[RMDB]
RNA sequence: GGGAACGACUCGAGUAGAGUCGAAAAGGUCAGGCCUGAUCGGAAACAGCAGCAGGUGAGUCCGCCUUAUGUGAAGGAUCGGCUGAAACACGAGGAAAUACUGAGCCAACGCAAGACGCUAGCCGAAAAAAUCUAGUUCACUUCGGUGAACUAGAAACGAAUACUUUUACUUCGGUAAAAGUAUUCGAAAAGAAACAACAACAACAAC
Reactivity to DMS in 0.01 (KOAc 150mM, MgCl2 10mM, bicine 150mM(pH8.5), 24C), signal-to-noise 2, nucleotides 027 to 156: g000g020u000c040a130g000g020c060c020u000g010a130u000c040g000g000a190a040a120c040a100g020c050a050g030c040a060g030g010u020g010a090g000u010c020c040g010c000c020u000u000a100u000g040u010g010a110a130g020g000a090u000c030g030g000c020u000g000a100a090a060c050a080c040g020a140g020g000a070a060a100u000a090c080u000g020a140g000c000c010a050a040c010g000c020a070a080g010a150c060g000c050u000a050g010c010c020g010a010a040a100a040a080a110u000c000u000a000g000u010u000c000a020c010u000u010c280g030g010u000g000a000a010c000u010a000g000a000a040a060
Reactivity to 2A3 in 0.01 (KOAc 150mM, MgCl2 10mM, bicine 150mM(pH8.5), 24C), signal-to-noise 5, nucleotides 027 to 156: g030g010u040c030a020g030g050c030c040u100g030a070u070c030g060g070a120a080a040c040a030g090c000a000g010c020a020g010g030u060g030a060g060u040c050c030g020c020c000u100u070a140u110g070u030g050a040a040g040g020a040u060c030g020g000c010u030g020a070a040a010c060a010c070g030a050g040g070a050a100a030u140a100c050u070g020a010g030c000c020a060a030c040g010c040a020a030g060a030c040g010c060u040a020g000c020c000g000a120a030a000a000a000a010u010c000u000a000g000u000u000c000a000c000u020u050c200g060g000u000g000a000a000c000u000a000g000a010a010a000

Record summary
An RNA of 207 nucleotides, treated with DMS and 2A3 and read out base by base. The reactions ran in a buffer of 150 mM KOAc, 10 mM MgCl2 and 150 mM bicine (pH 8.5), at 24 C. 2A3 adducts were read by reverse transcription with SuperScript II with manganese. Source: RMDB library M2RFPK, as collected in RNAgym. DMS adducts were read by reverse transcription with MarathonRT. The DMS profile rests on 4,889 reads.